RNA sequence: GGGAACGACUCGAGUAGAGUCGAAAAGAGAUCGCGGCUGGGGCUUAGGACCCCACUCCUGCGAGACAGGAGUAAUCCUAAACAGGGUUUUCACCCUUCCUUUAGUUUCCUUCCUCUCCUGGAGAGGGGUUAUUACUUCGUUCGCGAAGUAAUAACCAAAAGAAACAACAACAACAAC
Reactivity to DMS in 0.01 (KOAc 150mM, MgCl2 10mM, bicine 150mM(pH8.5), 24C), signal-to-noise 1, nucleotides 027 to 126: g020a140g000a030u000c020g020c030g030g010c300u000g010g030g000g000c060u000u000a060g000g000a100c010c010c030c040a040c020u000c030c000u000g010c040g010a140g000a120c170a010g030g000a020g020u000a100a070u000c060c010u010a020a030a070c240a030g010g010g020u000u000u010u010c220a040c000c010c000u010u000c020c010u000u000u000a090g010u000u000u000c040c010u000u000c000c020u000c000u000c000c050u010g010g010a010g010a040g010g000
Reactivity to 2A3 in 0.01 (KOAc 150mM, MgCl2 10mM, bicine 150mM(pH8.5), 24C), signal-to-noise 1, nucleotides 027 to 126: g050a010g010a050u080c030g000c020g040g010c030u020g000g010g010g030c000u060u070a070g100g000a070c000c000c010c010a000c000u030c010c010u020g050c070g170a150g050a040c000a020g000g010a010g000u030a010a030u020c000c010u020a020a020a010c190a050g040g000g020u040u090u210u240c060a050c010c000c000u010u040c050c010u060u080u060a050g000u000u020u020c010c000u040u080c010c000u050c000u000c000c110u100g040g020a020g000a000g000g040
An RNA of 177 nucleotides, treated with DMS and 2A3 and read out base by base. Reactivities are given for positions 27 through 126.